An RNA of 207 nucleotides, treated with DMS and 2A3 and read out base by base. DMS adducts were read by reverse transcription with MarathonRT.
RNA sequence: GGGAACGACUCGAGUAGAGUCGAAAACGCAACUCGACUAUGACGAAAUGGGAAACGGGUUAAUAUUCCCGUGCCACGGGGUCGAUCACGCUGGGCAUCGCCCAGUCGAACCGUCCAACUCCGUGGAAGCCGUAAUGGCAGGAAGCGGACGAACGGCCCUUGUGCGUAUGUUCGCAUACGCACAAGGAAAAGAAACAACAACAACAAC
Reactivity to DMS in 0.01 (KOAc 150mM, MgCl2 10mM, bicine 150mM(pH8.5), 24C), signal-to-noise 2, nucleotides 027 to 156: c070g000c040a030a060c030u010c020g020a120c030u000a070u010g030a140c040g000a080a140a080u000g020g060g000a010a110a050c020g000g020g000u020u000a110a120u000a300u000u010c000c000c030g020u010g010c020c010a040c040g000g010g030g000u000c060g020a180u020c050a090c060g030c020u000g030g010g040c010a260u000c170g020c000c000c000a030g010u000c020g020a050a020c020c010g010u010c020c000a100a040c050u010c010c000g010u000g010g000a030a100g020c000c000g010u010a100a170u000g020g050c040a050g020g010a280a300g000c030g040g000a040c020g000a090a050c040g030g000c060
Reactivity to 2A3 in 0.01 (KOAc 150mM, MgCl2 10mM, bicine 150mM(pH8.5), 24C), signal-to-noise 3, nucleotides 027 to 156: c110g020c030a040a040c040u010c020g000a000c030u090a080u250g070a090c040g130a100a090a100u130g000g020g050a150a130a010c000g000g000g050u070u080a100a010u070a080u090u060c000c000c000g000u010g000c000c000a020c020g020g000g000g010u010c030g000a030u080c030a000c100g000c000u000g000g000g000c050a260u170c200g000c000c000c000a000g010u020c010g030a000a010c020c000g000u000c010c020a050a030c040u000c000c000g000u040g030g000a010a000g000c000c000g100u190a130a190u250g000g010c010a000g040g080a050a000g000c020g000g030a030c050g020a040a010c010g010g000c000
Conditions: 150 mM KOAc, 10 mM MgCl2 and 150 mM bicine (pH 8.5), 24 C.